The record gives the reactivity of an RNA of 177 nucleotides to DMS and 2A3.
[RMDB]
RNA sequence: GGGAACGACUCGAGUAGAGUCGAAAAGCCUCCUACCCGAUUCAAGCGAUAGGCAGGGUGCGCCGUGCGCACCGAGGGUGCUGACAGGUUACGCUCGCUGCCUUUCCAGUAGUUCACGAAAGGCCUCAAAUACCCAGCAAUUCGUUGCUGGGUAUUUAAAAGAAACAACAACAACAAC
Reactivity to DMS in 0.01 (KOAc 150mM, MgCl2 10mM, bicine 150mM(pH8.5), 24C), signal-to-noise 4, nucleotides 027 to 126: g010c060c010u000c050c040u000a110c020c010c020g000a090u010u000c110a110a090g020c090g010a050u000a040g000g010c040a060g000g000g040u000g010c020g020c040c140g020u000g020c060g020c010a010c010c000g010a100g040g020g020u000g000c010u010g010a140c070a100g010g000u010u020a090c090g000c020u000c020g000c040u000g000c010c010u010u000u000c020c030a120g010u010a090g010u010u000c070a070c070g010a070a090a070g000g010c010c130u000c130
Reactivity to 2A3 in 0.01 (KOAc 150mM, MgCl2 10mM, bicine 150mM(pH8.5), 24C), signal-to-noise 2, nucleotides 027 to 126: g010c000c020u000c020c010u040a090c030c000c020g030a040u060u120c060a040a070g040c060g150a050u060a020g040g030c030a010g070g050g000u020g000c000g000c030c090g210u180g050c020g000c020a010c000c030g080a200g040g120g010u030g000c000u060g050a090c050a120g030g030u130u190a040c060g030c020u040c030g100c050u020g020c040c000u010u020u030c020c000a010g000u060a010g040u120u050c060a030c110g010a040a020a060g040g010c000c020u080c040
DMS (dimethyl sulfate) methylates the pairing face of unpaired adenines and cytosines. For 2A3, 1,966 sequencing reads were counted. Conditions: 150 mM KOAc, 10 mM MgCl2 and 150 mM bicine (pH 8.5), 24 C.